[RMDB]
Chemical mapping of a 177-nucleotide RNA with 2A3 and DMS.
The DMS profile rests on 3,332 reads.
2A3 adducts were read by reverse transcription with SuperScript II with manganese.

RNA sequence: GGGAACGACUCGAGUAGAGUCGAAAACCCCUUCAGCGAACAGAGAGCGCUGCGAGCGAGGAGUAAGACCAUAGCGAUGGAAAGAGAUGCUAGGAGUAGGGAGAGACCGAAGCGAGGAGGAAAGCAAUCGUAAGUACAAGUUCGCUUGUACUUACGAAAAAGAAACAACAACAACAAC
Reactivity to 2A3 in 0.01 (KOAc 150mM, MgCl2 10mM, bicine 150mM(pH8.5), 24C), signal-to-noise 3, nucleotides 027 to 126: c010c000c000c030u030u050c020a030g010c010g030a050a040c060a080g070a020g010a020g120c020g010c030u040g010c050g040a040g010c030g020a030g040g000a040g020u080a070a020g020a020c020c010a060u070a040g050c050g060a030u080g050g020a070a060a010g030a020g000a020u090g010c020u030a020g020g030a050g030u060a030g050g000g020a010g000a000g000a010c020c010g020a040a010g030c020g010a020g020g020a010g010g010a090a020a020g040c040a000a090
Reactivity to DMS in 0.01 (KOAc 150mM, MgCl2 10mM, bicine 150mM(pH8.5), 24C), signal-to-noise 4, nucleotides 027 to 126: c040c000c000c140u000u010c020a030g020c020g010a070a070c070a090g010a140g000a070g010c080g010c030u000g000c100g020a090g020c070g010a060g020g000a090g010u000a060a080g010a080c030c030a060u000a060g000c070g020a100u000g000g000a060a070a090g010a060g010a080u000g020c090u000a050g000g000a050g010u010a060g000g010g010a060g000a080g000a060c090c030g020a050a070g010c060g000a060g000g010a050g010g010a060a060a080g010c140a050a080